An RNA of 177 nucleotides, treated with 2A3 and read out base by base. For 2A3, 907 sequencing reads were counted. The reactions ran in a buffer of 150 mM KOAc, 10 mM MgCl2 and 150 mM bicine (pH 8.5), at 24 C.
RNA sequence: GGGAACGACUCGAGUAGAGUCGAAAAGACCUUCUCCCAACUCGAAGGCUUUGGCUCCUAUGGUUUUCCGGAGAGCCAUGCGGCGUCGUUCGCGCUGAUCGCCUAUGCGUCGAGCUACAUCAAACGCCCCAUAGCGCCCAUUCGUGGGCGCUAUGGGAAAAGAAACAACAACAACAAC
Reactivity to 2A3 in 0.01 (KOAc 150mM, MgCl2 10mM, bicine 150mM(pH8.5), 24C), signal-to-noise 3, nucleotides 027 to 126: g100a160c030c000u100u030c010u030c010c000c010a020a000c030u070c060g020a140a060g050g040c030u160u050u080g000g000c010u020c020c100u100a110u120g050g000u190u010u160u100c020c020g090g000a190g000a000g030c000c010a000u040g000c010g090g010c010g030u020c020g070u090u140c020g000c020g000c020u020g040a080u130c030g080c010c010u050a030u120g060c020g050u070c060g010a000g030c070u120a030c010a100u110c090a150a040a040c040g000c000